[RMDB]
RNA sequence: GGGAACGACUCGAGUAGAGUCGAAAAGAUAUGGAGAAUGGUAAGAAGCAUUCACUAUUCGGAAACGAACGAAUGAAUGAACUACUUCGAAACAUUCUCCUAAGUCAAACUGCCCUUCGGGGCAGAACUUACAAUUCUUGUUCGCAAGAAUUGUAAGAAAAGAAACAACAACAACAAC
Reactivity to DMS in 0.01 (KOAc 150mM, MgCl2 10mM, bicine 150mM(pH8.5), 24C), signal-to-noise 6, nucleotides 027 to 126: g000a060u000a300u000g000g010a010g010a010a010u000g000g000u010a130a260g000a020a010g000c020a040u000u000c000a020c070u000a270u000u000c000g010g000a090a110a180c100g010a020a040c100g000a060a020u000g010a010a010u000g000a040a040c100u010a300c000u000u000c010g000a120a130a070c000a010u000u000c000u000c000c000u000a010a080g010u000c050a050a090a200c000u000g010c000c000c010u000u000c200g030g010g000g010c010a000g000a020a110
Reactivity to 2A3 in 0.01 (KOAc 150mM, MgCl2 10mM, bicine 150mM(pH8.5), 24C), signal-to-noise 5, nucleotides 027 to 126: g030a020u050a050u120g000g010a000g000a020a000u010g020g000u070a110a000g000a000a000g020c010a000u000u010c010a010c110u070a050u020u020c010g040g020a080a120a100c060g020a030a000c080g060a190a300u020g000a010a030u020g000a040a020c080u260a060c000u260u010c000g000a110a110a000c000a000u000u000c000u000c000c000u000a010a000g000u010c000a030a050a120c010u000g000c000c010c000u010u050c290g040g000g000g000c000a000g010a000a000
The record gives the reactivity of an RNA of 177 nucleotides to DMS and 2A3.
For 2A3 the reverse transcriptase was SuperScript II with manganese.
For DMS the reverse transcriptase was MarathonRT.
The reactions ran in a buffer of 150 mM KOAc, 10 mM MgCl2 and 150 mM bicine (pH 8.5), at 24 C.